[RMDB]
RNA sequence: GGGAACGACUCGAGUAGAGUCGAAAAAACAAUUCGGUGAAGGGUUCAACAUGAAUAUUAUUCGUGUUAAUGCGAAAGAUCGUUUUAUGAAUAAAUUAAAAGGUGUUUCAGAUCCUGAACAAAAACGUACGUUAGGGAACUUCGGUUCCCUAACGUAAAAAGAAACAACAACAACAAC
Reactivity to 2A3 in 0.01 (KOAc 150mM, MgCl2 10mM, bicine 150mM(pH8.5), 24C), signal-to-noise 3, nucleotides 027 to 126: a000a000c270a180a070u300u180c160g100g000u120g070a090a060g010g020g000u050u060c010a030a030c000a000u000g000a070a000u170a230u300u150a070u080u050c000g020u030g040u120u080a040a040u150g050c040g090a040a040a090g110a010u030c040g030u050u000u000u030a060u020g030a160a050u100a190a160a110u030u070a060a040a000a030g040g000u040g190u000u000u080c010a000g000a030u020c000c000u010g040a130a030c100a000a110a170a000a000c110g030
Reactivity to DMS in 0.01 (KOAc 150mM, MgCl2 10mM, bicine 150mM(pH8.5), 24C), signal-to-noise 2, nucleotides 027 to 126: a140a010c130a130a030u080u050c100g030g000u000g030a190a080g000g000g010u030u010c090a050a000c000a010u020g020a010a010u010a220u000u050a050u010u000c000g000u000g000u000u010a060a050u050g000c070g020a020a000a040g000a040u000c010g030u000u000u000u000a060u020g000a130a110u040a050a080a040u010u000a020a030a000a130g000g010u000g010u000u010u000c060a050g010a080u020c030c000u000g010a180a030c080a050a050a080a060a010c150g010